[RMDB]
RNA sequence: GGGAACGACUCGAGUAGAGUCGAAAAACCCAGUCACGUAGCGAUAGCGGAGUGUAUACUGGCUUAGUCAUGCGGCAUCAGUGCGGAUUGUAUGAAAAGUGCACCAUGUACGGUGUGAAAUGCCGCAGAAAAGACGUUAUUUCGAUAACGUCUUUUCAAAAGAAACAACAACAACAAC
Reactivity to 2A3 in 0.01 (KOAc 150mM, MgCl2 10mM, bicine 150mM(pH8.5), 24C), signal-to-noise 7, nucleotides 027 to 126: a000c000c000c000a010g060u050c040a010c060g030u050a020g040c020g110a150u090a070g040c050g110g240a090g040u050g040u010a020u010a060c010u020g040g030c030u090u150a050g030u140c040a050u080g020c000g000g000c000a010u030c060a050g070u020g070c010g040g150a170u130u110g040u140a110u080g130a110a100a060a010g110u100g010c000a000c000c000a030u190g050u250a080c150g040g010u040g020u010g070a000a010a010u060g000c010c010g000c000a000
Reactivity to DMS in 0.01 (KOAc 150mM, MgCl2 10mM, bicine 150mM(pH8.5), 24C), signal-to-noise 9, nucleotides 027 to 126: a090c030c000c000a110g010u020c060a050c070g010u020a200g010c050g010a090u030a120g020c030g020g030a300g020u010g000u030a100u030a070c040u000g000g000c060u010u010a070g010u030c100a150u010g010c020g010g010c010a040u010c080a110g000u010g010c020g000g000a160u020u020g000u020a050u020g020a050a050a100a140g020u010g010c000a020c030c020a120u030g030u030a090c120g000g040u010g010u000g010a050a090a050u010g000c010c010g030c020a070